This 177-nucleotide RNA was probed chemically with 2A3.

RNA sequence: GGGAACGACUCGAGUAGAGUCGAAAAGCAAUGCAGCACCCAUAACUUUCGUGAUGAUGGUUCCAUAACUCUCAGUGGUGCGUUGGCAAGUAAACAUCGUGAAAUCGUGAAAUACCGAGCCGAUGCCGCACCCGACCAUGUUCGCAUGGUCGGGUGCAAAAGAAACAACAACAACAAC
Reactivity to 2A3 in 0.01 (KOAc 150mM, MgCl2 10mM, bicine 150mM(pH8.5), 24C), signal-to-noise 1, nucleotides 027 to 126: g000c060a000a140u130g000c020a000g000c000a040c000c080c040a020u090a090a060c200u110u240u150c060g110u000g030a060u060g040a040u040g020g000u040u000c060c050a090u100a200a070c000u050c030u010c070a100g080u140g080g110u000g000c030g030u050u020g060g000c020a040a000g000u040a040a130a070c000a020u030c000g040u020g240a210a140a120u080c000g020u000g060a000a090a050u140a010c000c020g000a010g000c040c000g010a020u030g000c000c040
The RNA was probed in 150 mM KOAc, 10 mM MgCl2 and 150 mM bicine (pH 8.5) at 24 C. The data come from the RNA Mapping Database (RMDB), library OK2TST.